[RMDB]
RNA sequence: GGGAACGACUCGAGUAGAGUCGAAAACACACAACAGGUCUGGGGCUGGGGCUCAGUGGCAGGGCGCUUGCCUAACACGUGUGAGGCACUGGGUUCGAUUCUCAGCACCUCAUAUAAAUAACUAAAAGGAUGUGAUGAAUUUCGAUUCAUCACAUCCAAAAGAAACAACAACAACAAC
Reactivity to 2A3 in 0.01 (KOAc 150mM, MgCl2 10mM, bicine 150mM(pH8.5), 24C), signal-to-noise 1, nucleotides 027 to 126: c030a010c010a010c020a030a300c060a130g020g040u000c050u030g030g010g000g050c020u080g030g050g000g000c000u000c020a000g000u020g160g000c020a000g060g120g020c020g050c070u040u190g020c000c030u050a150a020c050a020c070g050u100g040u110g070a040g070g020c000a000c030u000g010g000g000u040u020c050g060a070u030u000c010u000c000a020g060c030a030c020c000u000c000a000u150a010u040a090a140a040u110a080a060c070u080a030a060a070a050
Reactivity to DMS in 0.01 (KOAc 150mM, MgCl2 10mM, bicine 150mM(pH8.5), 24C), signal-to-noise 1, nucleotides 027 to 126: c090a130c130a120c200a170a060c190a060g000g010u000c000u000g050g000g000g000c110u000g010g000g010g020c010u000c030a000g030u000g020g030c070a120g010g020g000c010g000c050u000u000g020c000c110u020a020a110c130a050c180g000u000g010u000g030a170g000g020c020a030c000u030g000g010g010u000u000c040g010a080u000u000c020u000c000a030g020c140a060c000c000u000c060a050u000a040u010a040a100a080u000a110a080c160u000a070a090a120a140

Notes
Chemical mapping of a 177-nucleotide RNA with 2A3 and DMS. Values cover nucleotides 27 to 126. 2A3 adducts were read by reverse transcription with SuperScript II with manganese. As a SHAPE reagent, 2A3 marks flexible, mostly unpaired nucleotides at the ribose 2'-OH. For 2A3, 888 sequencing reads were counted.